The record gives the reactivity of an RNA of 177 nucleotides to DMS and 2A3. Values cover nucleotides 27 to 126.
[RMDB]
RNA sequence: GGGAACGACUCGAGUAGAGUCGAAAAAGUCGAAGGUUUGAGUAUCAAAAGAUGGGCGAUGUGCUGGAGAUCAACAAUGCUAAAGUGCAGCCGAAGGGGUUUCCCACACUGACCAGGGGGAUAAAACCACCUCAUCGAUCUUCGGAUCGAUGAGGUGAAAAGAAACAACAACAACAAC
Reactivity to DMS in 0.01 (KOAc 150mM, MgCl2 10mM, bicine 150mM(pH8.5), 24C), signal-to-noise 1, nucleotides 027 to 126: a100g000u010c100g050a030a060g000g000u020u000u020g030a120g000u000a040u000c020a030a190a020a030g000a000u000g050g010g040c120g000a020u000g000u010g030c020u000g000g020a080g000a000u000c050a020a050c190a010a050u080g070c010u000a090a040a100g000u000g000c100a010g020c000c050g000a280a300g010g000g010g020u000u000u010c020c000c000a160c010a000c150u050g000a050c000c000a010g040g000g000g000g000a140u000a040a140a070a040c160
Reactivity to 2A3 in 0.01 (KOAc 150mM, MgCl2 10mM, bicine 150mM(pH8.5), 24C), signal-to-noise 1, nucleotides 027 to 126: a000g030u060c040g020a080a000g140g080u010u120u000g170a190g030u080a120u050c080a000a000a000a000g190a090u070g000g000g000c020g020a060u030g040u000g100c080u120g110g010a050g000a030u000c020a000a180c030a080a100u100g030c000u030a030a190a000g010u070g030c000a000g000c010c000g070a000a020g010g030g000g000u030u000u000c090c020c000a030c030a000c020u030g000a060c040c000a000g020g000g000g000g000a000u060a050a140a010a000c040

In probing experiments dimethyl sulfate is read out at A N1 and C N3, which are open when not base-paired. The reactions ran in a buffer of 150 mM KOAc, 10 mM MgCl2 and 150 mM bicine (pH 8.5), at 24 C. For 2A3, 576 sequencing reads were counted. It was measured as part of the RMDB library OK1LIB.